[RMDB]
RNA sequence: GGGAACGACUCGAGUAGAGUCGAAAAGAGAAUAAGGUUCGCCUUAUUCUCAAAGACCUCGUGGCGCAAUGGUAGCGCGUCUGACUCCAGAUCAGAAGGUUGCGUGUUCGAAUCACGUCGGGGUCACCAAAAACUAGCGCUUGUUCGCAAGCGCUAGCUUGAAAAUUUGGUUCGCCAAAUUUUCAAGAAAAGAAACAACAACAACAAC
Reactivity to DMS in 0.01 (KOAc 150mM, MgCl2 10mM, bicine 150mM(pH8.5), 24C), signal-to-noise 1, nucleotides 027 to 156: g000a050g000a010a000u000a020a030g040g020u000u000c300g110c010c000u000u000a020u000u010c030u020c000a000a100a060g100a040c030c020u000c000g110u010g020g020c020g060c000a040a060u000g040g000u020a060g010c030g000c000g000u000c000u020g010a080c000u000c060c300a270g030a120u000c070a070g000a050a070g020g020u010u000g030c030g010u000g020u000u000c000g000a300a050u000c030a000c010g000u000c000g020g000g030g010u000c000a120c000c060a020a080a040a120a270c010u000a020g030c010g010c010u010u000g020u000u020c300g000c020a030a010g050c000g130c000u000a000g000
Reactivity to 2A3 in 0.01 (KOAc 150mM, MgCl2 10mM, bicine 150mM(pH8.5), 24C), signal-to-noise 2, nucleotides 027 to 156: g000a000g000a000a010u000a010a010g020g020u040u080c100g130c010c000u000u000a000u000u000c000u000c000a000a000a000g010a000c000c010u000c010g000u000g030g000c010g010c020a030a030u130g170g130u170a030g010c010g000c000g000u000c000u000g010a000c020u100c210c140a130g060a300u010c010a000g000a010a010g010g010u080u000g000c000g000u010g010u010u000c010g000a000a000u010c000a000c010g010u010c000g010g000g000g020u010c000a000c010c000a020a060a030a020a010c000u000a000g010c010g000c010u030u000g070u080u060c240g010c120a000a010g040c000g000c000u000a000g010
Structure probing data (DMS and 2A3) for a 207-nucleotide construct. The DMS profile rests on 1,348 reads. The 2A3 profile rests on 2,106 reads. Conditions: 150 mM KOAc, 10 mM MgCl2 and 150 mM bicine (pH 8.5), 24 C.